[RMDB]
RNA sequence: GGGAACGACUCGAGUAGAGUCGAAAAGACCCUUUAUGGAACUGUCAUUCAACCCCAAAAAUCUAGUGCAAAAAUUGUCUUAAUUACUUAGGCUAAAAGAAAUAAGUAUUAAAGCGGGACAAGGCAUAACAGCAGCUACGCUUCGGCGUAGCUGCAACAUUAUGAUUUUCUUCGGAAAAUCAUAAUGAAAAGAAACAACAACAACAAC
Reactivity to 2A3 in 0.01 (KOAc 150mM, MgCl2 10mM, bicine 150mM(pH8.5), 24C), signal-to-noise 1, nucleotides 027 to 156: g030a000c000c000c090u000u160u110a210u080g000g010a070a040c060u060g060u100c020a020u100u150c060a100a180c000c020c010c050a000a300a000a000a000u080c140u080a030g070u020g050c020a000a000a100a300a300u090u110g000u000c000u000u120a070a070u070u000a120c010u020u030a020g010g120c020u100a040a000a180a000g020a040a040a020u040a040a000g020u040a020u040u170a140a150a080g140c100g020g030g000a010c010a040a000g050g000c020a010u050a180a050c020a060g060c000a000g020c000u000a000c020g030c000u020u080c210g070g000c000g010u000a000g000c000u000g000c000a000a000